[RMDB]
RNA sequence: GGGAACGACUCGAGUAGAGUCGAAAAGAUAUGGAGAAGGCUGACCACGAUGUCACUCGGAAACGAGUGCAUUAUCAAGCCCUCCUAAGUCAAAAUCGUAAUCAAGUGUUCGCACUUGAUUACGAAACUAUCUCGUCAUCUUCGGAUGACGAGAUAGAAAAGAAACAACAACAACAAC
Reactivity to DMS in 0.01 (KOAc 150mM, MgCl2 10mM, bicine 150mM(pH8.5), 24C), signal-to-noise 3, nucleotides 027 to 126: g000a060u000a300u000g000g000a020g000a150a090g050g000c010u010g000a130c300c230a080c190g030a010u000g010u000c010a000c000u010c000g000g000a040a040a120c010g010a000g020u000g010c010a010u000u000a090u020c100a150a050g000c020c010c000u000c000c000u000a020a090g000u000c020a100a050a130a110u000c000g010u010a000a010u000c000a000a010g010u010g010u000u010c240g020c010a000c000u000u000g000a000u000u000a000c000g010a010a050a190
Reactivity to 2A3 in 0.01 (KOAc 150mM, MgCl2 10mM, bicine 150mM(pH8.5), 24C), signal-to-noise 3, nucleotides 027 to 126: g010a010u080a040u090g030g000a060g050a300a190g040g010c000u010g050a130c090c080a150c300g040a020u080g250u300c040a010c010u000c010g000g020a030a040a010c010g010a010g000u000g010c000a010u010u030a140u150c060a060a000g000c010c000c000u000c000c010u010a120a040g040u030c030a020a000a020a300u050c020g010u000a000a000u010c000a020a010g000u000g040u170u160c300g070c120a010c000u000u000g000a000u010u000a000c000g000a000a000a000